[RMDB]
Structure probing data (2A3) for a 207-nucleotide construct. The reactions ran in a buffer of 150 mM KOAc, 10 mM MgCl2 and 150 mM bicine (pH 8.5), at 24 C. It was measured as part of the RMDB library M2RFPK.
RNA sequence: GGGAACGACUCGAGUAGAGUCGAAAACUGCUGACUCAUACUUACUGACACCGGUUGCUCAACAGGCUGUGUGGGACAAUAGAAUAACAAGGCUGUCAAUUUGAGCUUGACGGCUGCAAACCGAAUGAAAAGAGUCCCGGCUUCGGCCGGGACUCAACAUAACUGGUAUGUUCGCAUACCAGUUAUGAAAAGAAACAACAACAACAAC
Reactivity to 2A3 in 0.01 (KOAc 150mM, MgCl2 10mM, bicine 150mM(pH8.5), 24C), signal-to-noise 1, nucleotides 027 to 156: c060u070g000c030u020g040a100c020u050c030a080u020a090c010u130u050a100c020u070g050a030c020a050c060c000g070g000u040u080g020c020u020c040a050a030c010a020g100g000c070u010g010u020g000u030g040g080g000a010c020a080a110u070a090g100a060a050u090a130a030c040a110a050g020g000c010u000g010u030c000a000a020u100u040u100g020a000g000c000u010u010g000a000c000g010g000c010u010g030c050a070a090a160c000c100g100a100a050u070g040a070a080a050a080g000a000g010u020c000c010c040g010g030c000u110u100c180g080g000c000c040g080g010g000a010c000u000c000a000a000